[RMDB]
RNA sequence: GGGAACGACUCGAGUAGAGUCGAAAAGCGGAGUCAGGGGCAGGGGGUAAGCUCCUGUUCCGAGAGGGAGACAACCCAGACCGGGGUUAAGGCCCCUAAGUGCCGGCUAAGUGUAAACGAUAAAGGAAAAAUAGACUACGUUCGCGUAGUCUAUUUUAAAAGAAACAACAACAACAAC
Reactivity to 2A3 in 0.01 (KOAc 150mM, MgCl2 10mM, bicine 150mM(pH8.5), 24C), signal-to-noise 5, nucleotides 027 to 126: g040c020g030g020a040g070u100c040a050g030g000g010g000c010a030g060g020g000g000g050u080a090a100g080c000u010c010c000u000g010u030u010c000c000g000a020g000a000g010g020g000a070g010a050c050a070a050c000c000c000a000g040a060c010c070g030g000g020g010u070u090a050a050g100g010c000c000c000c000u020a110a040g030u030g050c000c010g010g030c040u080a100a100g040u050g030u170a080a130a050c070g030a070u110a130a150a100g110g020a030
Reactivity to DMS in 0.01 (KOAc 150mM, MgCl2 10mM, bicine 150mM(pH8.5), 24C), signal-to-noise 9, nucleotides 027 to 126: g010c030g010g000a080g020u020c070a120g000g000g000g010c000a050g000g000g020g010g010u030a070a110g010c010u000c000c000u000g000u010u000c010c010g000a110g010a120g000g010g010a090g010a110c160a090a100c020c000c000a120g010a120c170c110g010g000g000g010u000u010a090a130g020g010c030c000c010c020u000a030a060g010u020g000c010c010g000g000c040u000a060a110g010u020g020u010a060a070a090c110g010a130u040a070a070a120g010g020a030